Structure probing data (2A3 and DMS) for a 177-nucleotide construct. The 2A3 profile rests on 590 reads. The data come from the RNA Mapping Database (RMDB), library OK2TST.

[RMDB]
RNA sequence: GGGAACGACUCGAGUAGAGUCGAAAAUAUAUUCGUUCCUGAUACCAAUCUCCAGUGAAAGGACCCAGGGCUUUAUCAGGAAAUCAAUGAUUAUAGGACCCGGCCAGGAAACAUGAGAGAAUUCUGGCGUUAGACUAUCCUUCGGGAUAGUCUAACGAAAAGAAACAACAACAACAAC
Reactivity to 2A3 in 0.01 (KOAc 150mM, MgCl2 10mM, bicine 150mM(pH8.5), 24C), signal-to-noise 1, nucleotides 027 to 126: u040a000u010a050u000u040c050g070u030u000c000c000u000g000a000u030a040c020c020a100a170u030c010u000c080c010a060g030u050g240a200a180a120g020g080a040c000c080c080a060g020g000g040c050u180u100u090a000u060c000a000g000g170a030a030a030u110c040a000a120u130g010a050u130u030a000u110a090g090g000a080c020c010c100g110g040c000c000a010g000g070a030a060a020c000a110u230g060a140g050a030g060a160a090u050u000c000u010g030g050
Reactivity to DMS in 0.01 (KOAc 150mM, MgCl2 10mM, bicine 150mM(pH8.5), 24C), signal-to-noise 1, nucleotides 027 to 126: u000a020u000a050u000u000c020g060u000u000c000c000u000g040a030u000a110c040c050a150a100u000c160u020c000c050a130g020u010g010a060a150a260g000g000a040c130c050c060a100g000g000g020c300u000u000u000a000u010c020a010g010g030a070a050a070u000c220a040a070u000g040a040u020u020a020u000a000g030g000a170c040c000c020g030g030c000c000a000g020g000a060a030a170c030a020u010g010a140g000a190g020a090a240u000u000c010u000g000g010